[RMDB]
RNA sequence: GGGAACGACUCGAGUAGAGUCGAAAAUGCCUGGAGAUUUGGGCGUGCCCCCGCAAGACUGCUAGCCGAGUAGCGUUGGGUUGCGAAAGGCCUUGUGGUACUGCCUGAUAGGGUGCUUGCGAGUGCCCGUCUGCUCGCCUUUCGAGGCGAGCAGACGAAAAGAAACAACAACAACAAC
Reactivity to 2A3 in 0.01 (KOAc 150mM, MgCl2 10mM, bicine 150mM(pH8.5), 24C), signal-to-noise 1, nucleotides 027 to 126: u070g000c090c020u070g040g140a130g150a250u150u010u180g020g000g070c020g000u020g110c000c010c010c000c000g000c000a010a010g020a140c040u070g010c040u040a020g000c000c000g010a000g020u050a000g020c030g080u090u050g130g250g040u140u140g000c000g010a050a000a010g000g080c110c000u010u040g020u040g000g000u000a060c050u100g000c040c000u010g000a120u170a210g010g000g000u140g000c000u010u020g020c060g070a040g060u020g070c080c000
An RNA of 177 nucleotides, treated with 2A3 and read out base by base. The 2A3 profile rests on 447 reads. The data come from the RNA Mapping Database (RMDB), library RFM100. The RNA was probed in 150 mM KOAc, 10 mM MgCl2 and 150 mM bicine (pH 8.5) at 24 C. For 2A3 the reverse transcriptase was SuperScript II with manganese.